[RMDB]
RNA sequence: GGGAACGACUCGAGUAGAGUCGAAAAGAUAUGGACUAUGCUACCCACCUAUACAGCUCAAUGAUGCAAAUCAGCAUCGGAAACGAUGCUGAUUUGUUGAGAGCGUAUAGAGGCAUAGUCCUAAGUCCUGUCAAUCUGUGUUCGCACAGAUUGACAGAAAAGAAACAACAACAACAAC
Reactivity to DMS in 0.01 (KOAc 150mM, MgCl2 10mM, bicine 150mM(pH8.5), 24C), signal-to-noise 1, nucleotides 027 to 126: g010a080u000a080u000g020g010a010c000u000a000u000g020c000u000a170c010c040c050a300c100c000u000a000u010a000c000a160g150c000u000c000a070a220u020g020a120u000g000c000a020a000a000u000c000a000g010c000a000u000c000g000g060a010a050a300c020g000a000u000g000c000u050g000a000u000u000u010g000u000u020g020a300g000a000g000c000g000u000a000u000a000g000a050g010g000c000a010u000a000g010u010c000c000u000a010a000g020u000c000